[RMDB]
RNA sequence: GGGAACGACUCGAGUAGAGUCGAAAAAAUGGCAGCCACGAAGGCCAUGCUCUCCAUGAGACAGUGGGCAUACACGGAGUUUGACGAUGACAAACUCCUCCAGUUUGUCGUCAUGGCGACUCCUGAGAUAUGAUGAGCGGUUCGCCGCUCAUCAUAUAAAAGAAACAACAACAACAAC
Reactivity to 2A3 in 0.01 (KOAc 150mM, MgCl2 10mM, bicine 150mM(pH8.5), 24C), signal-to-noise 1, nucleotides 027 to 126: a000a000u070g010g020c020a000g040c010c000a070c090g130a150a060g090g040c030c010a010u020g000c010u020c000u030c080c030a100u150g010a010g030a080c060a050g020u010g020g070g000c020a070u180a090c040a020c160g080g000a040g010u040u000u090g040a060c050g050a110u070g010a010c020a000a010a010c020u100c000c030u000c000c000a070g000u050u020u020g010u000c010g040u000c020a010u090g080g030c020g010a000c000u010c060c000u080g050a120g020
Reactivity to DMS in 0.01 (KOAc 150mM, MgCl2 10mM, bicine 150mM(pH8.5), 24C), signal-to-noise 2, nucleotides 027 to 126: a050a000u000g000g030c010a060g000c080c050a090c120g000a060a090g030g010c020c030a040u010g000c100u000c020u010c060c060a050u000g010a140g020a090c120a070g020u000g030g010g000c170a060u010a070c210a220c210g000g000a010g040u010u000u020g030a300c170g020a020u000g000a020c000a000a010a000c000u010c080c080u000c100c040a100g000u010u000u000g020u010c010g000u010c010a000u010g010g000c100g010a040c020u000c010c000u000g000a140g010